[RMDB]
RNA sequence: GGGAACGACUCGAGUAGAGUCGAAAACGCGUAAUCGAUCGGCAUUACGCGAUAUAUCGCGCGUACGUAUAAUCGCGAUUAUACGAUAUGCCGCGUAAUUAUAGCUACGUAUAGCUAUAAUCGAUGCCCAGUCAGUACUGUUCGCAGUACUGACUGGAAAAGAAACAACAACAACAAC
Reactivity to DMS in 0.01 (KOAc 150mM, MgCl2 10mM, bicine 150mM(pH8.5), 24C), signal-to-noise 3, nucleotides 027 to 126: c050g030c030g020u000a010a000u000c030g000a150u000c150g060g010c300a080u000u010a000c000g000c020g010a050u000a080u010a110u000c010g000c000g020c030g030u000a020c030g000u000a010u000a030a040u000c120g010c230g010a070u000u000a010u000a040c020g020a130u000a000u000g030c130c040g010c020g010u000a070a020u000u000a000u000a000g000c010u000a050c300g000u010a110u010a030g000c000u000a010u000a000a030u030c150g010a040u000g010c140
Reactivity to 2A3 in 0.01 (KOAc 150mM, MgCl2 10mM, bicine 150mM(pH8.5), 24C), signal-to-noise 3, nucleotides 027 to 126: c020g020c000g010u010a010a010u000c060g160a130u140c100g130g000c100a000u000u010a000c020g000c000g020a000u000a010u010a010u060c000g000c000g010c010g020u020a050c020g020u000a010u010a040a020u040c040g000c030g130a010u000u040a010u000a010c020g100a190u010a010u030g100c150c010g010c000g000u000a060a010u020u010a010u000a010g010c000u010a030c100g300u280a150u110a300g010c000u000a000u000a000a020u050c080g050a040u140g030c000
An RNA of 177 nucleotides, treated with DMS and 2A3 and read out base by base. For 2A3, 3,525 sequencing reads were counted. For DMS the reverse transcriptase was MarathonRT. The RNA was probed in 150 mM KOAc, 10 mM MgCl2 and 150 mM bicine (pH 8.5) at 24 C.